Conditions: 150 mM KOAc, 10 mM MgCl2 and 150 mM bicine (pH 8.5), 24 C. The record gives the reactivity of an RNA of 207 nucleotides to DMS and 2A3. Reactivities are given for positions 27 through 156.
[RMDB]
RNA sequence: GGGAACGACUCGAGUAGAGUCGAAAACGGCAAAAAAGCAAACUUGACCACCAAGGAUAAAAGAGAUAUUAUCCAAGGAUGCAAAAGAUAAUCUCACUUUUGACACCCACUGAUCUCGAACUUAAAGAAAACCGAGACUACUUCGGUAGUCUCGGAAGGAGUAUGUUAAGUUCGCUUAACAUACUCCAAAAGAAACAACAACAACAAC
Reactivity to DMS in 0.01 (KOAc 150mM, MgCl2 10mM, bicine 150mM(pH8.5), 24C), signal-to-noise 1, nucleotides 027 to 156: c070g000g020c120a010a020a090a010a130a060g020c080a030a170a120c030u000u000g000a140c100c080a110c000c080a150a300g010g030a030u010a030a030a060a070g030a130g000a300u000a070u040u000a030u000c010c000a140a300g000g040a030u030g000c010a030a040a030a000g040a060u000a060a100u000c040u030c070a240c010u010u000u000u000g000a170c030a070c000c050c000a300c030u010g000a060u010c030u030c070g010a010a040c080u010u000a060a030a050g000a080a040a060a200c030c010g110a030g020a010c000u000a000c000u010u020c300g030g040u000a000g010u010c000u000c000g020g000a030a010
Reactivity to 2A3 in 0.01 (KOAc 150mM, MgCl2 10mM, bicine 150mM(pH8.5), 24C), signal-to-noise 4, nucleotides 027 to 156: c010g040g020c030a010a020a020a060a000a070g110c080a160a040a050c070u070u060g010a100c010c020a000c000c010a040a020g020g000a010u030a030a100a030a020g080a000g010a010u050a020u130u030a000u030c000c010a020a050g020g000a030u060g010c000a000a010a020a030g040a050u120a140a150u120c040u040c060a050c010u080u010u020u030g080a060c030a080c020c040c000a080c090u070g100a130u050c020u010c040g040a150a100c060u080u130a170a060a090g070a030a100a030a010c000c000g000a000g000a010c000u000a000c000u030u050c100g040g000u000a000g000u000c000u000c000g000g000a000a000
The 2A3 profile rests on 3,273 reads.